[RMDB]
RNA sequence: GGGAACGACUCGAGUAGAGUCGAAAAUGAACAAUUUACUGUUGUUCUUUUGGUUUGCACUAGGAUGCAAAAGAAAGAAAUCCCUGCGCUUUCUGUCUGUCUUUGUGGCGGCCCAGAUUGAAUUGGGUACUGUAUGCGAAUUCGUUCGCAUACAGUAAAAAGAAACAACAACAACAAC
Reactivity to DMS in 0.01 (KOAc 150mM, MgCl2 10mM, bicine 150mM(pH8.5), 24C), signal-to-noise 1, nucleotides 027 to 126: u010g040a070a040c000a020a010u010u020u010a110c250u000g000u000u000g020u000u000c010u010u000u000u000g000g000u000u000u000g000c000a010c030u010a180g010g020a170u000g000c000a000a030a060a190g000a030a040a030g000a100a080a090u000c050c010c020u000g000c300g000c030u010u000u000c000u000g020u000c100u000g010u000c000u000u010u010g020u020g000g030c010g000g000c120c090c020a030g020a100u010u020g000a060a120u000u000g010g010g010